[RMDB]
RNA sequence: GGGAACGACUCGAGUAGAGUCGAAAAUGUUUAAUGCCUGCAGUCCAAAAUUGGUUGGUAGAAGUACCUACUGUCAGUCCCAUCAGUAGAUUCACUUAUCACAUGGUAAGCGGGAUGUCACUCAGGCCACUCUCAAUAAGUUCGCUUAUUGAGAGUGAAAAGAAACAACAACAACAAC
Reactivity to 2A3 in 0.01 (KOAc 150mM, MgCl2 10mM, bicine 150mM(pH8.5), 24C), signal-to-noise 9, nucleotides 027 to 126: u090g020u020u080u060a130a050u120g020c010c000u030g030c070a030g060u050c020c020a070a080a120a220u200u180g110g040u040u050g010g050u050a070g030a180a020g060u050a040c010c010u010a000c000u010g040u060c030a030g070u000c020c000c000a020u030c010a010g020u030a010g010a060u090u090c030a010c020u020u040a020u070c010a060c060a300u260g050g000u060a030a020g020c090g040g030g020a030u050g050u050c010a020c060u030c010a010g010g000c000
Reactivity to DMS in 0.01 (KOAc 150mM, MgCl2 10mM, bicine 150mM(pH8.5), 24C), signal-to-noise 6, nucleotides 027 to 126: u020g010u000u010u010a060a070u020g010c000c000u000g000c120a080g010u010c020c040a040a040a140a100u020u040g000g020u010u020g020g020u020a080g010a070a040g000u020a070c150c000u000a020c000u000g000u020c080a100g000u000c010c000c000a090u010c030a020g010u000a020g000a060u010u020c060a110c020u010u020a020u000c010a140c180a150u020g000g000u010a060a040g000c070g020g020g010a040u010g000u000c050a100c060u020c030a040g000g010c090